[RMDB]
RNA sequence: GGGAACGACUCGAGUAGAGUCGAAAACGUGGGUCGCAUCACAAAUCAGCAGCACGCGACUGGUCAGUUUAGCGACGGCCACCACCUGACCAACAACACCUUUGUCGCUGAUGACCGGCUGGCCUUAGGAUUAAUGCUGAUUCGUCAGCAUUAAUCCAAAAGAAACAACAACAACAAC
Reactivity to 2A3 in 0.01 (KOAc 150mM, MgCl2 10mM, bicine 150mM(pH8.5), 24C), signal-to-noise 3, nucleotides 027 to 126: c040g050u060g020g010g000u020c020g000c040a080u120c070a030c050a060a120a090u090c020a020g050c010a000g000c020a000c060g030c030g050a040c030u000g000g000u010c030a030g010u040u070u150a040g000c010g050a040c000g050g020c010c010a020c010c000a020c010c020u030g060a040c040c010a000a050c030a010a010c000a100c020c020u070u140u140g010u000c020g000c030u040g030a080u080g010a020c020c030g040g000c020u020g020g000c000c020u030u080a040
Reactivity to DMS in 0.01 (KOAc 150mM, MgCl2 10mM, bicine 150mM(pH8.5), 24C), signal-to-noise 4, nucleotides 027 to 126: c130g020u000g000g010g020u000c040g020c040a110u010c110a060c120a050a090a100u010c070a050g010c050a080g000c040a040c140g010c050g010a060c060u010g000g010u000c030a030g000u010u000u010a070g020c060g010a050c040g010g010c030c010a100c050c040a060c120c030u010g010a080c040c030a040a080c090a060a100c170a090c090c100u000u000u000g000u000c020g020c010u000g000a030u010g010a060c050c040g010g000c070u000g010g000c060c050u000u010a190